[RMDB]
RNA sequence: GGGAACGACUCGAGUAGAGUCGAAAACUGGAAACGUGCGUAGCAACAGUAGGCCGAGUAUCCAACGUUGAUCAUAACAAACGGGUCAUUGGCAAGGCAGGUCGCAACCGCUGGCUGGGCAAGAGGCCGUGCAGGGACUGUUCGCAGUCCCUGCACGAAAAGAAACAACAACAACAAC
Reactivity to 2A3 in 0.01 (KOAc 150mM, MgCl2 10mM, bicine 150mM(pH8.5), 24C), signal-to-noise 1, nucleotides 027 to 126: c010u060g060g160a020a010a120c090g060u010g020c060g090u180a050g040c110a000a040c000a060g070u070a080g010g050c010c020g050a020g060u100a040u110c020c020a060a030c060g020u010u050g030a120u110c040a020u100a280a060c080a040a070a020c000g000g000g050u000c000a060u040u110g010g050c040a010a010g090g000c040a030g030g010u070c030g010c060a010a040c020c030g040c020u060g010g000c000u020g020g000g000c020a060a030g060a010g090g000c000
Reactivity to DMS in 0.01 (KOAc 150mM, MgCl2 10mM, bicine 150mM(pH8.5), 24C), signal-to-noise 1, nucleotides 027 to 126: c070u050g030g030a050a030a140c150g040u010g030c050g050u010a050g000c080a140a040c090a110g030u000a060g020g000c030c010g010a110g010u030a090u010c020c030a080a150c190g010u020u000g000a030u000c120a070u010a080a180c170a060a170a100c150g000g000g010u010c070a070u000u000g000g020c140a060a100g000g020c040a120g020g010u000c020g000c140a040a030c060c030g000c090u000g030g010c070u030g000g000g020c110a040a060g030a110g000g000c140
The record gives the reactivity of an RNA of 177 nucleotides to 2A3 and DMS. The 2A3 profile rests on 876 reads. 2A3 adducts were read by reverse transcription with SuperScript II with manganese. It was measured as part of the RMDB library OK2TRN. The RNA was probed in 150 mM KOAc, 10 mM MgCl2 and 150 mM bicine (pH 8.5) at 24 C.